[RMDB]
RNA sequence: GGGAACGACUCGAGUAGAGUCGAAAAACCAGCAUAUUCGUAUGCUGGUAAAAAAUCCUAAGUCGAACUGAUGACCGUGAGCUUUGAUCUAUCGGAAACGAUAGGGAGCCACGCAAGGUUCGAUAUGGAAAAAAAUCCCGCGAUUCGUCGCGGGAAAGUACUGUAGGGUGUUCGCACCCUACAGUACAAAAGAAACAACAACAACAAC
Reactivity to 2A3 in 0.01 (KOAc 150mM, MgCl2 10mM, bicine 150mM(pH8.5), 24C), signal-to-noise 2, nucleotides 027 to 156: a000c010c000a000g020c010a010u020a020u070u120c180g080u060a000u000g000c000u000g000g000u000a010a010a010a000a000a000u070c030c010u050a110a030g030u000c000g000a000a000c000u010g050a140u100g040a300c130c020g020u010g010a190g050c000u300u220u040g050a050u050c000u000a000u000c000g100g040a230a060a040c030g000a010u010a000g000g000g010a000g000c000c010a000c000g020c010a080a160g000g020u000u000c000g000a000u000a040u060g000g120a030a050a010a000a000a020a070u080c040c020c010g000c020g010a020u010u050c230g000u000c000g050c000g000g000g000a000a000a020

This 207-nucleotide RNA was probed chemically with 2A3.
For 2A3 the reverse transcriptase was SuperScript II with manganese.
For 2A3, 1,218 sequencing reads were counted.
The data come from the RNA Mapping Database (RMDB), library RNAMAK.
The reactions ran in a buffer of 150 mM KOAc, 10 mM MgCl2 and 150 mM bicine (pH 8.5), at 24 C.